Overview: Source: RMDB library OK2TST, as collected in RNAgym. Chemical mapping of a 177-nucleotide RNA with 2A3 and DMS. The RNA was probed in 150 mM KOAc, 10 mM MgCl2 and 150 mM bicine (pH 8.5) at 24 C.

RNA sequence: GGGAACGACUCGAGUAGAGUCGAAAAAGGGGUCCGACGUCGUCUUCACCACCUCGGCGAGCAACGGCGCGUCAUUGUCACAGGCCAGCUCCGCAUGCGGGACACCCUGCGGGGUAAAGACCUCCGGCACUUACGCUAAGUUCGCUUAGCGUAAGUGAAAAGAAACAACAACAACAAC
Reactivity to 2A3 in 0.01 (KOAc 150mM, MgCl2 10mM, bicine 150mM(pH8.5), 24C), signal-to-noise 3, nucleotides 027 to 126: a010g070g000g000g000u040c040c030g030a050c020g050u150c010g010u000c010u120u120c070a040c040c000a070c000c070u070c050g040g010c020g030a030g030c060a070a090c080g030g010c040g000c010g050u020c040a060u010u220g080u080c030a030c040a120g060g000c020c010a000g000c000u010c010c020g020c020a030u180g030c150g060g010g060a080c040a110c090c000c020u000g010c030g020g000g000g000u040a080a100a000g040a040c000c000u030c040c000g030g000
Reactivity to DMS in 0.01 (KOAc 150mM, MgCl2 10mM, bicine 150mM(pH8.5), 24C), signal-to-noise 4, nucleotides 027 to 126: a070g000g020g000g010u000c010c060g030a100c070g020u010c030g020u000c050u000u000c040a060c050c030a080c170c120u000c120g020g030c040g000a050g030c100a080a060c130g010g000c030g010c090g000u000c040a080u010u010g000u000c090a100c120a080g010g000c030c010a150g010c010u000c010c010g020c020a020u010g010c100g010g000g000a170c300a100c030c010c010u000g000c020g000g000g000g000u000a030a060a110g000a050c020c010u000c020c050g010g000